This 177-nucleotide RNA was probed chemically with DMS. Conditions: 150 mM KOAc, 10 mM MgCl2 and 150 mM bicine (pH 8.5), 24 C. For DMS the reverse transcriptase was MarathonRT. Source: RMDB library OK2TRN, as collected in RNAgym.
[RMDB]
RNA sequence: GGGAACGACUCGAGUAGAGUCGAAAACAGGAGAUCUGAACCCAAGCUGCCGAGUGACCCUGCAAGGGGGCCCAGCCAGGGGGCUGUGUCUUCUGGUCCCGCUGACGGUGAUACCCUCGGGCAUGGGGACCCUUAUCCCUUUCGAGGGAUAAGGGUCAAAAGAAACAACAACAACAAC
Reactivity to DMS in 0.01 (KOAc 150mM, MgCl2 10mM, bicine 150mM(pH8.5), 24C), signal-to-noise 1, nucleotides 027 to 126: c000a000g000g010a020g010a060u010c030u000g000a050a070c000c010c010a240a150g000c000u000g010c180c110g000a190g020u010g010a260c010c000c000u000g000c300a110a110g010g000g010g000g020c130c010c010a050g000c000c030a200g040g020g000g010g020c010u010g000u000g010u000c000u000u010c020u000g010g010u000c020c000c000g040c050u010g000a070c110g010g000u000g000a120u000a280c020c010c000u000c010g030g010g000c050a040u020g010g010g000